[RMDB]
RNA sequence: GGGAACGACUCGAGUAGAGUCGAAAACAGUUAAAACUUUAAAGUUUUGUCCAGUGCUAAAAUUCUCUAAUCCUAACAUAUCCUUCUGUAGUGUUACAAGGAUAGAACUCUCCAGGUAAAUACCAAGGCUGUGCUUUUCUGCAAGCAUAGUGGUUAAAUUUAUAGCUCGAUUCGUCGAGCUAUAAAUAAAAGAAACAACAACAACAAC
Reactivity to 2A3 in 0.01 (KOAc 150mM, MgCl2 10mM, bicine 150mM(pH8.5), 24C), signal-to-noise 2, nucleotides 027 to 156: c000a010g020u090u060a070a000a020a060c080u090u120u240a230a300a070g020u100u010u130u060g020u000c040c000a040g050u010g010c020u070a060a050a090a300u210u030c030u000c040u120a100a110u060c000c030u040a060a030c020a070u060a040u060c030c000u050u190c060u160g080u080a090g020u050g090u280u020a030c030a030a020g000g000a000u010a040g010a010a000c020u050c030u040c210c040a010g070g000u040a110a070a040u090a120c020c030a030a130g160g000c010u040g000u000g010c030u020u040u110u170c120u110g070c050a000a000g000c010a000u000a000g020u000g050g030u020u050a100a170
Reactivity to DMS in 0.01 (KOAc 150mM, MgCl2 10mM, bicine 150mM(pH8.5), 24C), signal-to-noise 1, nucleotides 027 to 156: c070a170g040u000u010a060a050a060a050c010u000u000u000a090a050a150g010u000u010u000u010g020u020c010c040a210g010u000g000c060u000a060a070a100a120u000u020c040u000c020u000a080a020u000c000c010u000a080a090c040a100u000a050u000c010c010u000u000c090u000g000u000a090g020u020g020u000u010a050c050a070a110g000g020a090u000a050g010a070a080c030u000c020u000c020c010a140g010g020u000a040a090a140u010a060c020c000a070a100g000g000c020u010g030u000g000c010u000u000u000u000c190u000g010c120a050a040g000c000a010u000a030g060u000g000g010u010u010a050a080
An RNA of 207 nucleotides, treated with 2A3 and DMS and read out base by base. For DMS, 2,907 sequencing reads were counted. 2A3 adducts were read by reverse transcription with SuperScript II with manganese. DMS adducts were read by reverse transcription with MarathonRT.